[RMDB]
RNA sequence: GGGAACGACUCGAGUAGAGUCGAAAACGCGUCAGAUUCGUCUGACGCGAAAGCAUAGAAGAGCGCUAUCAUGUAUUAUAGUUCUAUGCAACUAUAGCGCUAAAACGAUACCGUUCGCGGUAUCGAACAUCAGUGAUCGUUUCGACGAUCACUGAUGAAAAGAAACAACAACAACAAC
Reactivity to DMS in 0.01 (KOAc 150mM, MgCl2 10mM, bicine 150mM(pH8.5), 24C), signal-to-noise 2, nucleotides 027 to 126: c010g010c020g020u010c000a010g010a060u000u040c220g010u010c000u000g000a000c000g000c000g010a010a030a120g010c100a080u010a070g020a090a120g000a010g010c020g030c000u010a020u000c160a190u020g000u020a050u000u000a080u000a080g000u000u000c050u010a100u010g010c030a060a050c090u010a020u000a000g010c000g040c010u010a020a050a030a120c040g000a010u000a000c000c010g020u000u000c180g020c010g000g000u000a000u000c000g000a010a100
Reactivity to 2A3 in 0.01 (KOAc 150mM, MgCl2 10mM, bicine 150mM(pH8.5), 24C), signal-to-noise 4, nucleotides 027 to 126: c010g010c000g020u000c000a020g010a030u030u110c130g030u020c100u020g000a000c000g000c000g000a000a000a000g010c030a050u090a130g130a140a030g080a060g040c020g000c010u030a030u080c060a070u120g150u180a110u130u140a120u080a080g110u100u050c120u080a140u110g020c030a010a000c010u040a000u030a030g010c020g020c040u030a020a030a030a030c000g000a000u000a000c010c000g000u040u030c270g000c000g070g000u020a000u000c000g000a040a010
Structure probing data (DMS and 2A3) for a 177-nucleotide construct. The RNA was probed in 150 mM KOAc, 10 mM MgCl2 and 150 mM bicine (pH 8.5) at 24 C. The 2A3 profile rests on 3,954 reads. The DMS profile rests on 2,124 reads.